Chemical mapping of a 177-nucleotide RNA with DMS and 2A3. Conditions: 150 mM KOAc, 10 mM MgCl2 and 150 mM bicine (pH 8.5), 24 C. The DMS profile rests on 1,661 reads. For 2A3, 1,338 sequencing reads were counted.
[RMDB]
RNA sequence: GGGAACGACUCGAGUAGAGUCGAAAAAUAGCGCACACAGGAUUCAUAACAGUCUCGAGGAAGGUAACCAAAAAGGAACAAGUCUAGACGUAUUCCUGAACACCCUGGACACUCGUAGCCAUUGGCGUCUAGACACGAGUUUCGACUCGUGUCUAGAAAAAGAAACAACAACAACAAC
Reactivity to DMS in 0.01 (KOAc 150mM, MgCl2 10mM, bicine 150mM(pH8.5), 24C), signal-to-noise 2, nucleotides 027 to 126: a080u000a060g030c050g000c090a060c080a140c100a040g000g000a100u000u000c090a050u010a100a090c110a100g000u000c050u000c060g000a060g000g010a070a060g010g010u000a060a110c020c030a050a050a050a070a060g010g000a090a030c060a040a190g010u010c070u000a070g020a050c050g010u010a170u000u000c010c030u000g010a050a070c110a050c060c030c030u000g000g000a080c070a040c070u000c070g000u000a080g010c020c020a070u000u010g010g040c070g010
Reactivity to 2A3 in 0.01 (KOAc 150mM, MgCl2 10mM, bicine 150mM(pH8.5), 24C), signal-to-noise 1, nucleotides 027 to 126: a000u070a010g000c010g000c000a000c010a000c090a080g000g060a040u020u080c010a040u180a210a100c010a020g060u020c010u000c060g000a010g000g030a060a040g110g010u040a050a050c030c020a050a130a000a000a070g030g020a020a000c010a050a040g050u040c020u040a010g040a080c020g030u020a050u050u090c010c030u040g040a030a010c010a060c070c000c010u060g050g010a040c020a010c070u080c030g080u020a010g050c030c010a070u020u110g000g060c010g010